[RMDB]
RNA sequence: GGGAACGACUCGAGUAGAGUCGAAAAAUGAUGGCUAGGCAGAGAUUUCGUGACCAGGUGGUGUUGAUCACCGGUGCCUCCAGCGGCAUCGGGGAGGCGACCGCGAAGGCAUUCGCCCGUGAGGGCGCAAGUGGUAUCAGUUCGCUGAUACCACUUGAAAAGAAACAACAACAACAAC
Reactivity to DMS in 0.01 (KOAc 150mM, MgCl2 10mM, bicine 150mM(pH8.5), 24C), signal-to-noise 8, nucleotides 027 to 126: a080u010g010a080u010g010g010c030u000a050g010g010c040a080g010a100g000a100u000u000u000c060g010u000g010a110c030c030a090g020g020u000g010g010u000g000u000u000g020a160u000c040a080c030c010g020g010u000g000c000c000u010c120c190a120g010c190g010g000c030a020u000c020g010g000g010g010a040g010g010c040g000a040c030c040g010c060g010a070a060g010g000c110a080u000u000c030g010c000c010c000g000u020g000a210g010g000g000c010g010
Reactivity to 2A3 in 0.01 (KOAc 150mM, MgCl2 10mM, bicine 150mM(pH8.5), 24C), signal-to-noise 5, nucleotides 027 to 126: a010u080g050a020u080g020g010c040u030a020g020g030c040a010g050a040g010a160u050u100u140c070g050u050g060a070c010c020a040g050g040u040g010g030u060g040u120u180g090a090u050c010a010c050c010g000g010u010g010c000c000u090c090c060a090g060c070g010g000c010a010u040c010g000g000g030g000a040g010g040c030g030a030c020c020g010c010g040a050a020g030g000c020a060u090u120c050g000c030c000c000g040u090g050a140g000g000g010c010g010